[RMDB]
RNA sequence: GGGAACGACUCGAGUAGAGUCGAAAAGUCCCCACUUUCGAGUGGGGACAAUCAAAGUUUUGGCACUCGCAGCCCGCAGCGUUGGUGCUCCCACGCGGUGCAUAACUGCCUACUUCGGUAGGCAGAAUAUUUAUGACUAUUUCGAUAGUCAUAAAUAAAAAGAAACAACAACAACAAC
Reactivity to 2A3 in 0.01 (KOAc 150mM, MgCl2 10mM, bicine 150mM(pH8.5), 24C), signal-to-noise 3, nucleotides 027 to 126: g010u000c000c000c010c000a010c010u090u100u080c220g120a000g000u000g000g000g000g010a010c010a000a010u060c010a000a050a080g030u060u090u200u200g070g000c010a020c030u100c060g040c050a020g020c020c000c000g000c040a100g020c040g070u110u140g030g040u120g030c030u070c000c010c000a050c030g000c020g040g030u040g000c020a040u110a230a080c010u000g000c000c000u010a000c000u010u050c160g080g000u000a000g000g000c000a000g000a010a000
Reactivity to DMS in 0.01 (KOAc 150mM, MgCl2 10mM, bicine 150mM(pH8.5), 24C), signal-to-noise 7, nucleotides 027 to 126: g000u000c000c000c000c000a010c010u000u000u020c130g020a010g040u000g000g000g000g010a000c000a010a050u000c130a080a110a130g010u000u000u000u000g010g010c030a050c040u000c060g010c060a140g010c040c010c040g020c090a080g000c060g000u000u000g020g010u010g010c080u010c030c010c030a100c120g010c030g000g010u000g000c050a060u010a060a170c010u000g000c000c000u000a010c000u000u010c140g020g010u000a000g000g010c000a000g000a040a060
The record gives the reactivity of an RNA of 177 nucleotides to 2A3 and DMS.
It was measured as part of the RMDB library M2PK50.
For 2A3 the reverse transcriptase was SuperScript II with manganese.
2A3 is a SHAPE reagent: it acylates the 2'-hydroxyl of flexible nucleotides of all four kinds.